The record gives the reactivity of an RNA of 177 nucleotides to 2A3 and DMS. Values cover nucleotides 27 to 126. The RNA was probed in 150 mM KOAc, 10 mM MgCl2 and 150 mM bicine (pH 8.5) at 24 C. Source: RMDB libraries RFM100 and RFMREP, as collected in RNAgym. In probing experiments dimethyl sulfate is read out at A N1 and C N3, which are open when not base-paired. For DMS the reverse transcriptase was MarathonRT.

RNA sequence: GGGAACGACUCGAGUAGAGUCGAAAACUCCUUAUACUAUGCUCAAUCAGCUAGUCAUUCCAUGGCUUUAAGAUUACAAUGUACUUGAGUCAUUGACAUGUGAGAUCAAUAUACCUGCAUGUUAGUCUGUAAUGGGUAUGUUCGCAUACCCAUUACAAAAAGAAACAACAACAACAAC
Reactivity to 2A3 in 0.01 (KOAc 150mM, MgCl2 10mM, bicine 150mM(pH8.5), 24C), signal-to-noise 8, nucleotides 027 to 126: c010u050c000c000u040u050a090u020a060c040u030a040u270g000c010u020c060a170a170u050c010a060g000c010u020a010g040u030c030a120u120u040c060c010a000u010g010g000c000u020u040u240a040a010g010a050u070u120a110c100a100a180u280g030u080a070c000u030u020g020a010g010u030c020a030u010u060g020a010c010a020u010g030u060g120a060g010a040u090c070a200a050u100a010u060a280c010c010u010g000c010a010u010g010u030u070a060g070u070c070
Reactivity to DMS in 0.01 (KOAc 150mM, MgCl2 10mM, bicine 150mM(pH8.5), 24C), signal-to-noise 6, nucleotides 027 to 126: c140u010c030c070u000u010a090u030a050c040u010a030u020g010c010u000c130a130a100u040c200a060g000c040u010a020g000u000c160a070u010u000c100c090a040u000g010g000c020u010u000u020a040a040g000a070u010u010a060c130a100a090u020g010u000a040c020u000u010g000a030g000u000c020a040u010u000g020a010c020a010u000g000u000g000a040g010a070u010c160a090a130u020a110u010a130c050c010u000g000c020a020u000g000u000u000a040g000u010c140